Conditions: 150 mM KOAc, 10 mM MgCl2 and 150 mM bicine (pH 8.5), 24 C.
The record gives the reactivity of an RNA of 177 nucleotides to 2A3 and DMS.
For DMS the reverse transcriptase was MarathonRT.
2A3 adducts were read by reverse transcription with SuperScript II with manganese.
For 2A3, 2,296 sequencing reads were counted.
Values cover nucleotides 27 to 126.

[RMDB]
RNA sequence: GGGAACGACUCGAGUAGAGUCGAAAAACAUACUGGUAACCAUACUAUAGCUACCAAAGGCAAGUUUUUCAUUAUGUCUUGGGACUCAAGGGGAACUUGGAGCUCUGAAAUUUGCAGAGCAAUCAGGUACAAACCGAUAUUUCGAUAUCGGUUUGUAAAAAGAAACAACAACAACAAC
Reactivity to 2A3 in 0.01 (KOAc 150mM, MgCl2 10mM, bicine 150mM(pH8.5), 24C), signal-to-noise 3, nucleotides 027 to 126: a000c030a030u240a050c020u050g020g030u040a040a060c020c020a080u070a140c070u160a090u080a080g000c010u030a040c040c020a080a030a000g070g020c000a030a010g000u000u020u030u060u120c070a080u020u250a080u140g020u010c020u060u090g230g020g040a020c020u020c060a050a020g030g000g020g010a010a000c000u010u000g030g030a050g030c000u000c010u010g040a140a210a230u170u160u190g070c000a010g010a000g000c000a000a060u070c030a010g060g010
Reactivity to DMS in 0.01 (KOAc 150mM, MgCl2 10mM, bicine 150mM(pH8.5), 24C), signal-to-noise 4, nucleotides 027 to 126: a080c080a070u020a030c080u020g010g020u010a020a040c030c060a070u000a170c170u010a120u010a070g010c050u010a040c030c030a070a090a120g010g030c040a040a060g000u000u000u000u020u020c060a050u000u010a090u000g010u000c010u000u000g030g020g010a050c040u010c150a050a040g000g010g000g020a070a050c020u000u000g000g010a140g010c000u000c010u000g020a080a090a180u010u010u000g020c000a020g000a010g010c000a080a040u000c110a030g010g010